[RMDB]
RNA sequence: GGGAACGACUCGAGUAGAGUCGAAAAUUAUGAGACACUUGUACAUGUUAGCUCUAAAUUGGGAUGGUGAGCUUAGAAAUAUUUUAACUGAAAUCGGAGAUAAGAAAUAUGAGUGGUUAAGGGACAUCGUGGCUAUGACUCAUGCGAUACUGAAUGAACGGAGGAACCUAUUCGUAGGUUCCUCCGUAAAAGAAACAACAACAACAAC
Reactivity to 2A3 in 0.01 (KOAc 150mM, MgCl2 10mM, bicine 150mM(pH8.5), 24C), signal-to-noise 1, nucleotides 027 to 156: u210u130a120u150g000a000g000a000c000a000c020u040u110g070u120a080c010a030u050g050u100u080a020g060c030u020c070u190a060a120a040u210u070g070g010g000a040u020g080g020u040g020a010g040c080u040u080a050g020a010a110a040u090a030u090u070u060u040a080a000c010u070g010a090a030a030u210c050g060g010a000g030a050u070a080a010g080a060a060a000u230a110u070g060a000g000u020g010g040u020u040a080a020g010g010g000a000c000a030u030c000g020u020g010g000c010u030a020u250g010a000c010u000c000a050u090g000c000g000a000u000a060c000u000g040a030a090u200g000a100